[RMDB]
RNA sequence: GGGAACGACUCGAGUAGAGUCGAAAAGAGGAUUCAACGAGCUUCGUAGCAACGAUAGCAACGUAGCUUUUGCUACGACCCUAGCUAUCGAGGGAAGCUACGUCCCCUGCUCGAGGGCAGAAUCCGACCAUUAAUAGUGGUUCGCCACUAUUAAUGGAAAAGAAACAACAACAACAAC
Reactivity to DMS in 0.01 (KOAc 150mM, MgCl2 10mM, bicine 150mM(pH8.5), 24C), signal-to-noise 9, nucleotides 027 to 126: g020a180g010g010a020u000u010c020a180a140c030g000a040g000c020u010u000c010g020u010a060g020c050a140a140c040g000a010u000a000g010c010a120a160c010g000u000a000g020c000u000u000u000u000g020c000u000a000c010g000a110c150c160c130u000a100g000c010u000a010u000c000g010a110g010g000g010a100a070g000c010u000a020c030g000u010c060c020c030c070u000g000c010u000c030g010a100g010g010g020c200a100g000a030a020u000c000c000g010a200
Reactivity to 2A3 in 0.01 (KOAc 150mM, MgCl2 10mM, bicine 150mM(pH8.5), 24C), signal-to-noise 9, nucleotides 027 to 126: g130a020g020g000a010u020u020c030a050a030c040g020a010g010c010u090u070c040g070u060a020g030c020a060a070c010g000a010u000a010g000c010a030a040c000g000u000a000g000c010u130u180u220u300g000c000u010a010c000g170a170c060c010c010u030a040g000c010u010a010u020c000g000a060g070g110g050a140a010g000c000u030a050c010g070u090c010c020c000c010u020g010c000u010c000g040a150g030g070g020c070a040g010a010a000u000c000c000g000a020
This 177-nucleotide RNA was probed chemically with DMS and 2A3. For 2A3 the reverse transcriptase was SuperScript II with manganese. The RNA was probed in 150 mM KOAc, 10 mM MgCl2 and 150 mM bicine (pH 8.5) at 24 C. Source: RMDB library OK2TRN, as collected in RNAgym. High DMS reactivity at an A or C suggests that its Watson-Crick edge is free. The DMS profile rests on 21,627 reads.